Conditions: 150 mM KOAc, 10 mM MgCl2 and 150 mM bicine (pH 8.5), 24 C. An RNA of 177 nucleotides, treated with 2A3 and DMS and read out base by base. It was measured as part of the RMDB library TTRDEL. Reactivities are given for positions 27 through 126. DMS adducts were read by reverse transcription with MarathonRT. In probing experiments dimethyl sulfate is read out at A N1 and C N3, which are open when not base-paired. The 2A3 profile rests on 1,520 reads.
[RMDB]
RNA sequence: GGGAACGACUCGAGUAGAGUCGAAAAGAUAUGGAGAGCUACCCACCUGAGAAGUGACGAAGAACUCGGAAACGAGGGAGUCAUGGUCAGAGGCUCUCCUAAGUCAAAAGUGCUGUUCGCAGCACAACUAAUAAGGUCCGUUCGCGGACCUUAUUAGAAAAGAAACAACAACAACAAC
Reactivity to 2A3 in 0.01 (KOAc 150mM, MgCl2 10mM, bicine 150mM(pH8.5), 24C), signal-to-noise 1, nucleotides 027 to 126: g060a090u280a080u290g000g010a030g000a000g100c000u090a190c030c060c040a040c010c000u060g000a040g040a220a010g040u030g000a010c050g120a300a140g000a040a020c010u010c010g010g020a080a100a050c010g000a020g000g010g010a020g000u010c000a000u080g000g030u020c000a000g030a020g030g000c000u000c000u000c000c000u000a000a000g030u030c090a000a000a160a030g030u000g030c000u050g010u060u100c210g000c190a000g020c010a010c000a020a000
Reactivity to DMS in 0.01 (KOAc 150mM, MgCl2 10mM, bicine 150mM(pH8.5), 24C), signal-to-noise 2, nucleotides 027 to 126: g000a090u020a190u000g010g000a010g010a020g030c000u020a110c010c040c020a300c090c000u010g000a030g000a300a140g030u010g000a020c030g000a040a150g030a110a180c010u000c030g000g000a080a060a220c010g000a000g010g020g000a080g000u000c000a000u000g000g020u010c000a000g000a080g020g000c000u000c000u010c010c000u000a030a120g000u010c140a140a040a090a160g010u000g010c000u000g000u000u020c180g010c020a010g040c000a010c000a060a120